Background:
This 177-nucleotide RNA was probed chemically with DMS and 2A3. Values cover nucleotides 27 to 126. The DMS profile rests on 42,474 reads. The data come from the RNA Mapping Database (RMDB), library OK2TRN.

RNA sequence: GGGAACGACUCGAGUAGAGUCGAAAAACCAGGUGUAGGCAGCACUCGCCCACAGGGAUGGGACUGGAGGUGCAGAGGCCUAGAGAGCCAUCAGGAAUGGGUUCAGAGCCACCUGCACCUGCAGGUGGCGAAGAGGACGGUUCGCCGUCCUCUUCGCAAAAGAAACAACAACAACAAC
Reactivity to DMS in 0.01 (KOAc 150mM, MgCl2 10mM, bicine 150mM(pH8.5), 24C), signal-to-noise 9, nucleotides 027 to 126: a130c040c010a080g010g020u010g020u000a030g010g020c050a110g010c050a070c050u000c080g010c010c010c010a040c060a210g010g010g010a160u000g000g000g010a110c040u000g010g000a060g010g010u000g010c020a060g010a230g010g000c010c020u000a100g000a120g010a070g010c010c010a050u010c070a140g010g010a150a100u010g010g000g010u000u000c040a110g010a200g000c020c010a080c090c000u000g000c010a100c110c110u000g000c030a020g000g010u000g010
Reactivity to 2A3 in 0.01 (KOAc 150mM, MgCl2 10mM, bicine 150mM(pH8.5), 24C), signal-to-noise 9, nucleotides 027 to 126: a020c020c010a020g030g020u060g010u050a060g060g010c060a020g010c020a070c030u040c050g030c010c040c000a030c030a050g240g060g020a150u060g010g000g060a030c050u080g130g130a050g040g000u030g000c040a020g030a040g090g010c010c000u060a040g040a000g000a010g100c010c000a040u060c070a080g110g190a230a070u140g060g040g000u040u030c020a010g030a020g100c010c010a110c050c000u010g000c010a040c010c000u010g020c000a020g030g060u110g070